Structure probing data (2A3 and DMS) for a 177-nucleotide construct. The RNA was probed in 150 mM KOAc, 10 mM MgCl2 and 150 mM bicine (pH 8.5) at 24 C. It was measured as part of the RMDB library OK2TRN. For 2A3, 4,120 sequencing reads were counted.
RNA sequence: GGGAACGACUCGAGUAGAGUCGAAAACACUGGGAAAGUCUGGAAUGUUGGUGAACUGGGUCUUCACAGAGCUGGUUUAUUGACUCCUGCUCCAAACACUUGUUCCAUGGAGGAACCGUACUUUCUCUCAGGCUUAUACUUUCGAGUAUAAGCCUGAAAAAGAAACAACAACAACAAC
Reactivity to 2A3 in 0.01 (KOAc 150mM, MgCl2 10mM, bicine 150mM(pH8.5), 24C), signal-to-noise 3, nucleotides 027 to 126: c030a010c060u070g000g000g000a000a040a040g030u030c040u040g030g020a230a160u200g030u040u010g010g030u020g020a000a010c010u010g040g060g260u030c010u120u140c060a070c050a070g010a040g020c010u010g000g030u000u000u020a020u010u020g010a000c010u010c010c020u050g020c000u000c020c000a040a110a020c120a060c130u130u240g040u170u010c060c030a060u090g050g020a040g050g000a040a020c020c000g020u050a020c020u040u010u000c010u000c000
Reactivity to DMS in 0.01 (KOAc 150mM, MgCl2 10mM, bicine 150mM(pH8.5), 24C), signal-to-noise 4, nucleotides 027 to 126: c120a120c170u010g010g000g000a020a000a010g010u000c030u010g000g000a110a100u020g010u000u000g010g010u010g020a020a010c020u000g010g000g000u000c010u000u000c300a140c280a030g000a020g000c010u000g000g000u000u000u010a030u000u000g000a020c010u000c070c030u000g010c030u000c010c040a060a060a090c160a110c150u010u010g000u000u010c060c070a180u000g010g010a050g010g000a050a090c160c280g020u000a020c010u000u000u000c020u000c030